[RMDB]
RNA sequence: GGGAACGACUCGAGUAGAGUCGAAAAGAUAUGGACCAUGGUGGUGCGUUGAUCUAUAAGGGUCGGAAACGACCCAUAGGGAGCACGCAUGGUCCUAAGUCAAAACUCAGUCGUUCGCGACUGAGAACACCGAGUGACUGUUCGCAGUCACUCGGUGAAAAGAAACAACAACAACAAC
Reactivity to 2A3 in 0.01 (KOAc 150mM, MgCl2 10mM, bicine 150mM(pH8.5), 24C), signal-to-noise 1, nucleotides 027 to 126: g000a000u020a010u030g010g000a020c010c020a040u090g200g300u300g190g040u030g270c030g120u300u090g000a000u000c010u000a020u020a300a300g000g000g000u000c000g010g000a010a010a010c000g020a010c060c000c020a010u000a000g020g000g000a000g000c000a000c000g090c020a000u010g000g020u000c000c000u020a000a000g000u000c000a010a020a010a040c020u030c020a010g000u000c000g050u050u050c290g020c030g140a010c000u000g000a000g040a020a030
The data come from the RNA Mapping Database (RMDB), library TTRDES. This 177-nucleotide RNA was probed chemically with 2A3. The reactions ran in a buffer of 150 mM KOAc, 10 mM MgCl2 and 150 mM bicine (pH 8.5), at 24 C. Reactivities are given for positions 27 through 126.